[RMDB]
The data come from the RNA Mapping Database (RMDB), library TTRDEL. This 177-nucleotide RNA was probed chemically with 2A3 and DMS. The reactions ran in a buffer of 150 mM KOAc, 10 mM MgCl2 and 150 mM bicine (pH 8.5), at 24 C.
RNA sequence: GGGAACGACUCGAGUAGAGUCGAAAAGAUAUGGACUCGGAAUCGACGAAGAACUCUCAUCGGAAACGAUGAGAGGGGAGUCGUGGCCGAGUCCUAAGUCAAAUCCUACCUCUUCGGAGGUAGGAAAGCAUAUGCUUUGGUUCGCCAAAGCAUAUGCAAAAGAAACAACAACAACAAC
Reactivity to 2A3 in 0.01 (KOAc 150mM, MgCl2 10mM, bicine 150mM(pH8.5), 24C), signal-to-noise 2, nucleotides 027 to 126: g040a000u060a010u110g000g020a000c000u010c010g020g050a060a150u220c060g050a010c030g070a180a110g080a090a070c010u000c000u000c000a000u000c000g000g030a050a020a030c000g000a000u010g000a000g000a000g000g010g020g050a080g060u060c010g010u060g100g050c000c020g010a000g010u020c000c010u000a010a000g000u000c010a010a000a100u040c000c000u010a010c000c000u030c010u050u090c300g150g000a000g000g000u020a030g000g000a000a050a000
Reactivity to DMS in 0.01 (KOAc 150mM, MgCl2 10mM, bicine 150mM(pH8.5), 24C), signal-to-noise 2, nucleotides 027 to 126: g000a040u000a300u000g010g000a000c010u000c000g000g020a120a060u000c010g030a000c010g030a090a160g010a280a180c000u000c010u000c010a010u000c000g010g000a100a060a140c010g040a000u000g000a020g020a000g000g000g020g010a240g000u000c000g010u000g010g000c010c010g000a010g000u000c000c000u020a000a060g000u000c040a090a110a250u010c000c000u000a010c010c000u000c000u000u020c160g000g010a000g010g010u000a000g010g000a000a010a040